An RNA of 177 nucleotides, treated with 2A3 and DMS and read out base by base.
2A3 adducts were read by reverse transcription with SuperScript II with manganese.
The 2A3 profile rests on 13,685 reads.
The RNA was probed in 150 mM KOAc, 10 mM MgCl2 and 150 mM bicine (pH 8.5) at 24 C.
The DMS profile rests on 20,051 reads.
It was measured as part of the RMDB library OK1LIB.
For DMS the reverse transcriptase was MarathonRT.
In probing experiments dimethyl sulfate is read out at A N1 and C N3, which are open when not base-paired.
[RMDB]
RNA sequence: GGGAACGACUCGAGUAGAGUCGAAAAGAUACAUCAGAAGUCGGCACAACUCCCGACUCGCGGUGAGCGAUGCAGCGUAGCGCGAGCUACGCAGCUGCUGUGCGGAUGGCUAGCAAAAGCUAGCCCAGAGGACUCAUAUAUUCGUAUAUGAGUCCUCAAAAGAAACAACAACAACAAC
Reactivity to 2A3 in 0.01 (KOAc 150mM, MgCl2 10mM, bicine 150mM(pH8.5), 24C), signal-to-noise 9, nucleotides 027 to 126: g000a000u180a030c040a030u080c020a030g070a160a020g110u020c010g010g060c140a030c030a300a300c100u060c010c000c000g010a020c020u010c020g020c050g030g060u130g030a030g000c030g110a130u150g010c020a010g000c000g000u020a000g000c010g010c060g020a030g000c000u000a000c000g000c000a000g000c010u040g000c010u030g030u080g060c030g060g050a090u130g030g000c000u010a000g000c010a100a120a260a000g000c000u000a010g000c000c000c000a020
Reactivity to DMS in 0.01 (KOAc 150mM, MgCl2 10mM, bicine 150mM(pH8.5), 24C), signal-to-noise 8, nucleotides 027 to 126: g000a190u030a090c050a040u010c060a100g000a130a050g010u000c010g010g000c270a110c080a080a140c260u030c090c010c000g000a050c060u000c040g000c300g000g030u010g000a080g000c060g010a080u030g000c030a050g010c010g000u000a010g000c010g010c300g010a210g000c010u000a000c000g020c000a010g030c010u010g010c030u000g010u010g000c050g010g000a090u030g000g010c000u000a000g000c000a100a070a110a130g010c010u000a000g000c000c000c180a060